[RMDB]
RNA sequence: GGGAACGACUCGAGUAGAGUCGAAAACAUUGCUAGGAACGCUGCAGGUGAGAUUCACUCUAGCACCUGCAUGGGCGGUGACAUUUUCAAAUUUAACCAGAUCUGAGAAAAAUGCACAAACAGACCCCACACAGCAGCACAAUAGAAGCACUAAAUGGUUGAUGCAUAGUUUCGACUAUGCAUCAACAAAAGAAACAACAACAACAAC
Reactivity to DMS in 0.01 (KOAc 150mM, MgCl2 10mM, bicine 150mM(pH8.5), 24C), signal-to-noise 1, nucleotides 027 to 156: c020a070u000u010g000c020u000a110g020g000a210a020c060g010c060u000g040c010a040g030g030u000g000a070g030a120u000u000c150a130c190u040c030u010a140g020c010a030c000c040u010g060c030a000u000g030g000g040c020g090g040u000g000a090c080a100u000u000u000u000c030a020a090a160u000u000u000a130a190c120c100a090g030a060u000c000u000g010a070g010a010a030a070a030a000u000g030c080a070c040a050a060a060c080a080g000a100c040c000c010c080a100c070a060c060a000g000c040a040g000c000a040c020a010a030u000a050g000a060a040g030c030a020c050u000a080a030a040u000g000
Reactivity to 2A3 in 0.01 (KOAc 150mM, MgCl2 10mM, bicine 150mM(pH8.5), 24C), signal-to-noise 3, nucleotides 027 to 156: c040a060u070u160g040c040u080a040g020g050a100a080c080g000c080u030g000c010a000g000g010u030g000a100g020a090u210u200c080a070c160u110c040u080a080g050c010a010c000c010u030g000c020a000u030g000g040g000c050g010g000u010g050a040c010a030u000u030u030u040c050a060a080a090u090u140u080a090a070c050c000a030g040a140u040c050u080g030a030g060a130a040a000a030a000u030g000c060a000c000a050a130a000c020a070g100a200c020c000c020c000a010c010a010c000a020g070c000a000g000c000a010c000a060a000u030a020g020a050a000g000c020a010c060u030a030a100a090u160g080
Chemical mapping of a 207-nucleotide RNA with DMS and 2A3. For DMS, 1,589 sequencing reads were counted. Conditions: 150 mM KOAc, 10 mM MgCl2 and 150 mM bicine (pH 8.5), 24 C. Values cover nucleotides 27 to 156.